[RMDB]
RNA sequence: GGGAACGACUCGAGUAGAGUCGAAAACGACCAGCAGCGGACAGCAAAUUGCAGCAUGGUCACGGGCCGCCACCCGAGUUCGGUGUGCCCAUCGAUGAUUUUCGCGGUUUAGUCUGCCACCUGAGAAACGUAAUCACCAGUUCGCUGGUGAUUACGUAAAAGAAACAACAACAACAAC
Reactivity to DMS in 0.01 (KOAc 150mM, MgCl2 10mM, bicine 150mM(pH8.5), 24C), signal-to-noise 2, nucleotides 027 to 126: c130g000a150c030c000a070g020c150a050g010c100g050g000a030c060a060g000c120a050a050a100u010u000g010c030a050g000c110a050u000g000g000u000c040a090c140g030g020g020c010c050g000c080c090a060c080c040c090g000a100g000u000u000c090g020g010u010g000u000g020c020c020c010a070u000c100g000a040u020g000a110u000u010u020u000c170g020c070g020g020u000u000u000a080g000u000c040u000g010c030c050a040c120c040u000g000a070g000a040a090
Reactivity to 2A3 in 0.01 (KOAc 150mM, MgCl2 10mM, bicine 150mM(pH8.5), 24C), signal-to-noise 2, nucleotides 027 to 126: c000g070a050c000c020a020g030c010a000g000c040g030g050a030c030a060g050c060a100a020a100u080u100g070c010a020g020c020a050u060g060g000u000c040a010c050g020g000g020c010c000g040c030c010a070c020c030c030g040a030g120u140u180c090g000g000u020g130u160g000c000c020c020a010u060c060g110a120u060g040a060u020u070u070u170c040g000c000g020g060u020u040u070a010g020u010c000u010g050c000c010a100c000c030u070g020a060g140a070a160